[RMDB]
Structure probing data (2A3 and DMS) for a 177-nucleotide construct.
RNA sequence: GGGAACGACUCGAGUAGAGUCGAAAACCAUAGGAUUUCGAUCCUAUGGCCUGCUAUGUCGCGUAAUAGCUUUUCGACUCUACUUGGGUGGUUCCCACGCGAUGGGGACCGGUUUCGACCGGUCCAAAUCAAACAGGAAAUUCGUUUCCUGUUUGAUAAAAGAAACAACAACAACAAC
Reactivity to 2A3 in 0.01 (KOAc 150mM, MgCl2 10mM, bicine 150mM(pH8.5), 24C), signal-to-noise 6, nucleotides 027 to 126: c000c000a000u000a000g010g010a010u040u060u210c260g060a020u010c000c000u000a000u000g000g010c040c080u020g000c000u010a010u050g210u200c110g010c050g300u120a070a020u010a020g000c000u040u000u010u000c000g000a000c000u000c000u000a000c000u000u000g000g000g000u000g000g000u000u000c000c000c000a000c000g020c010g100a140u110g140g040g000g030a010c000c010g000g060u030u090u130c200g110a040c010c000g000g010u000c000c000a000a000
Reactivity to DMS in 0.01 (KOAc 150mM, MgCl2 10mM, bicine 150mM(pH8.5), 24C), signal-to-noise 7, nucleotides 027 to 126: c000c000a010u000a000g000g000a010u000u000u010c170g010a030u000c000c000u000a000u000g000g010c210c120u000g000c000u000a000u000g010u010c160g020c290g010u010a100a010u000a010g010c010u000u000u000u000c000g010a020c000u000c000u000a000c000u000u000g000g000g020u000g010g010u000u000c000c000c000a010c070g020c120g000a080u010g010g010g010g000a020c000c000g000g000u000u000u010c190g010a030c000c000g010g000u000c000c000a010a020
The data come from the RNA Mapping Database (RMDB), library M2PK50. Conditions: 150 mM KOAc, 10 mM MgCl2 and 150 mM bicine (pH 8.5), 24 C. Reactivities are rounded to 0.1 and cut off at 0 and 3. 2A3 adducts were read by reverse transcription with SuperScript II with manganese.